[RMDB]
RNA sequence: GGGAACGACUCGAGUAGAGUCGAAAAUUGACCAAGAAAAGAUUGUGCCGAAUACACGCACUAUUGAUCUCUCUGAUCAAAAAUUGGACAAUAUCCAGCAUUUCUACAUGCAGGUAGACCAACGUCACACUCUCCACAGAUUCGUCUGUGGAGAGUGAAAAGAAACAACAACAACAAC
Reactivity to 2A3 in 0.01 (KOAc 150mM, MgCl2 10mM, bicine 150mM(pH8.5), 24C), signal-to-noise 2, nucleotides 027 to 126: u000u030g010a010c060c010a010a000g070a030a110a020a010g090a080u080u090g000u000g000c040c050g090a130a140u170a170c120a020c080g010c000a020c010u010a050u000u030g020a040u010c100u000c030u010c100u130g030a010u040c030a000a000a000a030a060u040u030g000g010a030c020a050a010u030a060u090c030c000a030g010c000a040u020u170u140c070u100a080c050a060u070g030c040a010g030g020u020a020g060a050c000c010a020a020c060g110u100c040a020
Reactivity to DMS in 0.01 (KOAc 150mM, MgCl2 10mM, bicine 150mM(pH8.5), 24C), signal-to-noise 2, nucleotides 027 to 126: u010u000g060a110c020c000a050a010g010a070a080a100a170g000a050u020u000g000u000g040c030c020g010a200a120u010a200c210a120c220g000c020a020c040u000a060u020u010g010a050u000c060u000c230u000c090u000g000a040u000c020a000a010a100a150a170u000u000g010g000a110c000a010a050u000a260u000c010c010a090g000c000a040u000u000u000c120u040a040c210a020u000g020c030a100g000g020u000a070g000a150c040c010a040a130c220g010u000c080a150
The record gives the reactivity of an RNA of 177 nucleotides to 2A3 and DMS.
The RNA was probed in 150 mM KOAc, 10 mM MgCl2 and 150 mM bicine (pH 8.5) at 24 C.
For DMS the reverse transcriptase was MarathonRT.
For 2A3, 1,399 sequencing reads were counted.